[RMDB]
RNA sequence: GGGAACGACUCGAGUAGAGUCGAAAACACCUAUGGAAUUUUCAUGGGAAUUCGAGGAGAAAUUCGAAAGAGUACGCUCCACACGGAAAUCCUUUGCCCGGAUAGAAUCUGAAGUGGCGACAUUUACAUUAUCUCACCUCUUCGGAGGUGAGAUAAUAAAAGAAACAACAACAACAAC
Reactivity to DMS in 0.01 (KOAc 150mM, MgCl2 10mM, bicine 150mM(pH8.5), 24C), signal-to-noise 2, nucleotides 027 to 126: c220a180c000c000u040a010u010g040g000a040a090u020u010u030u000c000a010u020g000g000g000a150a090u010u000c000g020a070g020g000a010g040a080a090a130u060u000c020g030a120a060a090g040a060g020u000a110c020g000c140u000c010c040a050c090a120c120g020g020a040a150a090u020c030c000u030u000u000g010c090c020c090g000g000a060u010a110g000a010a230u040c050u000g000a020a070g070u040g010g040c060g000a010c300a060u010u020u040a000c200
Reactivity to 2A3 in 0.01 (KOAc 150mM, MgCl2 10mM, bicine 150mM(pH8.5), 24C), signal-to-noise 4, nucleotides 027 to 126: c080a060c010c000u010a010u020g050g150a220a260u150u180u030u150c010a010u000g020g000g000a010a030u020u000c010g000a020g170g070a120g170a130a080a120u130u030c010g010a010a040a020g010a010g000u050a160c020g000c010u000c000c000a020c010a000c010g040g020a050a160a050u030c010c000u020u060u140g020c000c010c000g000g000a020u050a050g080a070a110u080c090u100g030a080a020g030u090g090g020c020g020a030c040a040u140u130u080a070c050

Structure probing data (DMS and 2A3) for a 177-nucleotide construct. The RNA was probed in 150 mM KOAc, 10 mM MgCl2 and 150 mM bicine (pH 8.5) at 24 C. For 2A3 the reverse transcriptase was SuperScript II with manganese. For 2A3, 1,986 sequencing reads were counted. It was measured as part of the RMDB library OK1LIB.